[RMDB]
RNA sequence: GGGAACGACUCGAGUAGAGUCGAAAAGCCUGCCAACGUUACCCUAACCUCGUUCUCUGUAAUUGACCAAGCCAUUGCCCGCACUGACGUUACGAUUCAGUGGGAUUCCUCUCCUAAUGCCAUUGAAUAUGAGGUUGAGUGGCGGCGAGAUGAUAUGACAAGAGUUAUGGUUCGCCAUAACUCUUGUAAAAGAAACAACAACAACAAC
Reactivity to 2A3 in 0.01 (KOAc 150mM, MgCl2 10mM, bicine 150mM(pH8.5), 24C), signal-to-noise 4, nucleotides 027 to 156: g020c010c000u040g040c020c020a110a020c090g050u120u140a110c020c000c000u020a030a010c010c000u010c020g040u060u000c080u030c040u090g090u110a090a100u060u160g070a070c020c040a050a020g050c030c030a060u050u140g020c030c010c000g060c010a040c020u030g000a020c040g080u090u150a080c090g040a070u080u030c000a000g000u010g000g010g000a010u070u060c010c020u080c030u030c000c010u060a040a010u060g070c020c020a030u020u030g030a020a000u090a110u190g030a030g000g000u030u010g040a090g000u020g020g020c020g000g000c020g010a010g000a030u170g010a020u090a040u300g060
Reactivity to DMS in 0.01 (KOAc 150mM, MgCl2 10mM, bicine 150mM(pH8.5), 24C), signal-to-noise 3, nucleotides 027 to 156: g010c020c010u010g070c060c010a070a060c040g000u000u000a050c030c010c000u000a080a060c010c010u000c010g020u000u000c040u000c060u000g020u000a060a120u000u010g000a080c030c030a050a140g010c030c030a110u010u000g010c010c010c040g030c050a070c060u000g020a050c060g030u000u000a120c090g000a120u000u010c010a040g040u000g000g010g000a080u000u000c030c020u000c050u000c030c010u000a070a050u000g020c010c010a010u000u000g000a050a050u000a060u000g020a020g030g030u000u010g010a050g030u000g010g020c030g000g030c030g010a120g000a080u010g000a130u000a100u000g020